[RMDB]
RNA sequence: GGGAACGACUCGAGUAGAGUCGAAAACUGCACUGUCCAAUAUGGAAGGUAAUAGCCACAUGGGACUACUACAACUCAGAUUCAAUUCCAUUUUAAAAAUAAUUUCCUCAGGUGCACUAGCCACAUUUCGAACGUUCAGUAGCCAUAUUGGAUAGCAGCAGGAGUACGAUUUCGAUCGUACUCCUGCAAAAGAAACAACAACAACAAC
Reactivity to 2A3 in 0.01 (KOAc 150mM, MgCl2 10mM, bicine 150mM(pH8.5), 24C), signal-to-noise 2, nucleotides 027 to 156: c050u090g000c060a030c090u010g010u000c000c000a000a000u000a010u000g000g030a100a060g090g030u020a120a180u030a190g130c110c010a110c010a190u120g000g000g090a060c010u040a020c010u050a040c110a130a030c080u060c070a050g020a110u050u110c080a090a120u090u080c010c030a060u020u040u300u300a050a100a030a030a010u200a030a010u050u030u210c010c030u050c050a020g020g000u030g000c030a070c020u010a070g050c050c000a150c000a090u080u150u130c080g050a080a090c070g050u220u120c030a030g020u050a010g000c010c010a010u010a010u000u000g000g000a010u010a000g010c020a000